[RMDB]
RNA sequence: GGGAACGACUCGAGUAGAGUCGAAAAGAUAUGGAGCUGUUGGACAUGCUGUAGAGGUUCGGAAACGAACCGAUCAGCAACAGCCACCAGCUCCUAAGUCAAACAGCAUGACUUCGGUCAUGCUGAAUCUCGACUAUCUGUUCGCAGAUAGUCGAGAAAAAGAAACAACAACAACAAC
Reactivity to DMS in 0.01 (KOAc 150mM, MgCl2 10mM, bicine 150mM(pH8.5), 24C), signal-to-noise 2, nucleotides 027 to 126: g000a050u000a300u000g000g010a000g050c000u000g000u010u000g010g000a010c080a300u000g000c000u000g000u010a050g010a300g000g000u000u000c000g030g030a090a050a250c000g020a000a000c010c000g010a150u000c000a000g010c000a050a040c250a080g010c000c010a010c010c010a010g000c000u000c000c000u010a030a070g000u000c010a190a170a270c030a020g000c020a010u000g000a010c000u000u000c160g050g010u000c000a010u010g000c000u000g000a000a060
Reactivity to 2A3 in 0.01 (KOAc 150mM, MgCl2 10mM, bicine 150mM(pH8.5), 24C), signal-to-noise 1, nucleotides 027 to 126: g020a000u050a040u070g000g000a020g020c000u000g030u030u010g050g000a070c110a300u300g000c000u020g000u050a080g110a100g110g000u000u000c020g000g040a050a050a060c010g000a000a020c010c020g020a040u010c000a000g020c000a040a020c040a030g080c000c000a000c000c000a010g000c010u000c010c000u000a010a000g000u000c030a010a130a120c000a000g000c010a000u000g000a020c000u100u090c300g150g010u000c010a000u000g040c000u000g010a000a010